[RMDB]
RNA sequence: GGGAACGACUCGAGUAGAGUCGAAAAUAGUAACCAUUCGUGGUUACUAAUGGAUCCUAAGUCUCGACAUGUACCCAGUAAGACAUGUCGGAAACGACAACAGCUUACGGGUACAACAGCGAGAUAUGGAAUUGCUGCUUUAGUUCGCUAAAGCAAAGUUAAUUUGCACUUUCGAGUGCAAAUUAACAAAAGAAACAACAACAACAAC
Reactivity to DMS in 0.01 (KOAc 150mM, MgCl2 10mM, bicine 150mM(pH8.5), 24C), signal-to-noise 1, nucleotides 027 to 156: u000a000g020u000a010a000c010c020a080u040u000c300g030u000g040g000u030u010a000c000u000a040a030u000g030g000a140u000c000c000u000a190a280g020u000c010u000c000g030a100c070a300u010g010u000a060c010c010c010a300g000u000a050a040g010a010c020a300u000g000u000c000g000g000a030a080a250c000g050a130c010a060a070c040a300g000c000u000u000a000c000g020g020g000u010a050c000a010a030c150a060g000c000g040a010g020a050u000a130u000g050g050a050a150u010u000g010c010u000g000c000u000u000u000a060g010u010u000c190g010c030u000a010a020a030g010c080a030a060a080
Reactivity to 2A3 in 0.01 (KOAc 150mM, MgCl2 10mM, bicine 150mM(pH8.5), 24C), signal-to-noise 3, nucleotides 027 to 156: u060a000g010u000a000a000c000c000a020u040u080c300g080u070g010g000u020u020a030c010u050a030a030u100g060g060a090u020c000c000u060a130a070g020u010c000u000c010g210a250c030a100u030g000u000a000c000c010c130a100g010u010a010a030g050a050c040a140u060g000u000c010g000g010a080a040a010c010g000a000c010a110a020c030a090g020c010u010u000a000c000g000g000g000u000a000c000a000a000c010a000g050c000g000a000g000a000u010a030u040g020g040a060a090u120u280g100c070u040g000c000u030u020u000a010g020u050u040c300g030c150u000a000a000a000g030c010a030a000a000